[RMDB]
RNA sequence: GGGAACGACUCGAGUAGAGUCGAAAAGUGCUAUCUUCACAUCAAAUGCACAUCCAAUAAGUUGUGCACUUAAUCAAGGCAGUGCAGAAGAUGUUGCAAGAGACCAAGGACAGAUAGUCGAAAGAGUGAAAACAGUCCUGGCUAGACUGGGCAUUACACUAGAAGGGCAUUUCGAUGCCCUUCUAGUAAAAGAAACAACAACAACAAC
Reactivity to DMS in 0.01 (KOAc 150mM, MgCl2 10mM, bicine 150mM(pH8.5), 24C), signal-to-noise 2, nucleotides 027 to 156: g020u000g070c000u000a030u000c010u000u010c050a110c080a110u000c010a000a280a100u000g030c000a020c040a050u000c040c020a090a210u020a070a090g030u000u000g010u000g000c020a040c050u010u000a060a300u000c050a100a120g040g020c120a050g030u000g000c040a070g000a140a130g010a070u010g030u010u000g000c000a030a120g030a300g030a030c050c040a010a120g010g010a080c050a050g060a060u000a040g020u010c040g000a130a020a130g000a070g040u010g000a110a050a050a080c060a130g000u000c020c010u020g010g040c050u000a060g010a040c030u000g000g050g000c060a030u010u000a070c040
Reactivity to 2A3 in 0.01 (KOAc 150mM, MgCl2 10mM, bicine 150mM(pH8.5), 24C), signal-to-noise 3, nucleotides 027 to 156: g090u060g000c010u040a050u020c000u040u120c030a020c000a060u060c010a060a040a060u020g010c010a000c000a070u030c020c020a040a140u240a190a050g070u130u110g080u080g110c040a000c030u050u100a020a150u250c120a030a030g070g020c060a020g010u010g000c030a000g070a140a010g000a010u060g020u180u090g030c040a020a030g000a020g000a000c000c030a050a050g090g000a020c000a040g010a010u060a050g000u020c010g050a010a070a080g070a010g040u180g070a070a000a080a000c050a010g030u040c020c020u020g040g030c000u030a040g010a090c010u060g000g000g000c000a010u060u100a050c040
The record gives the reactivity of an RNA of 207 nucleotides to DMS and 2A3. For DMS the reverse transcriptase was MarathonRT. Conditions: 150 mM KOAc, 10 mM MgCl2 and 150 mM bicine (pH 8.5), 24 C. Source: RMDB library OK3TST, as collected in RNAgym. Reactivities are given for positions 27 through 156. 2A3 adducts were read by reverse transcription with SuperScript II with manganese. For 2A3, 1,229 sequencing reads were counted.